[RMDB]
RNA sequence: GGGAACGACUCGAGUAGAGUCGAAAACCUGUUGACUUCGGUCAACAGGAAAAGGUGGAUGCUACGCUACCGAAGUACCAAAAGUGCAGAAGGAACGCACAAAAACUUAUCCGUUCGCGGAUAAGAACAUGAAGAAAAGGUUCGCCUUUUCUUCAUGAAAAGAAACAACAACAACAAC
Reactivity to 2A3 in 0.01 (KOAc 150mM, MgCl2 10mM, bicine 150mM(pH8.5), 24C), signal-to-noise 6, nucleotides 027 to 126: c000c000u000g000u000u000g000a000c010u020u040c240g100g000u000c000a000a000c000a000g000g010a010a060a000a010g030g010u020g020g030a060u110g140c130u180a050c220g000c020u000a010c010c010g030a060a010g040u050a050c010c000a030a070a020a060g020u020g000c030a020g110a150a080g160g040a130a030c070g000c040a010c010a020a040a020a030a030c010u000u010a000u000c010c010g020u030u040c280g030c010g070g010a000u000a000a010g010a010a010
Reactivity to DMS in 0.01 (KOAc 150mM, MgCl2 10mM, bicine 150mM(pH8.5), 24C), signal-to-noise 7, nucleotides 027 to 126: c000c000u000g010u000u000g010a010c000u000u010c190g030g010u000c000a010a010c000a010g000g010a030a030a070a090g000g010u010g010g010a060u010g030c160u000a050c140g000c010u000a040c010c000g010a070a100g010u000a150c020c010a080a050a080a130g010u000g010c010a100g020a120a120g010g020a110a090c150g000c030a020c050a070a040a050a080a150c000u000u000a000u000c000c000g010u000u010c180g020c010g000g000a010u000a010a000g000a080a170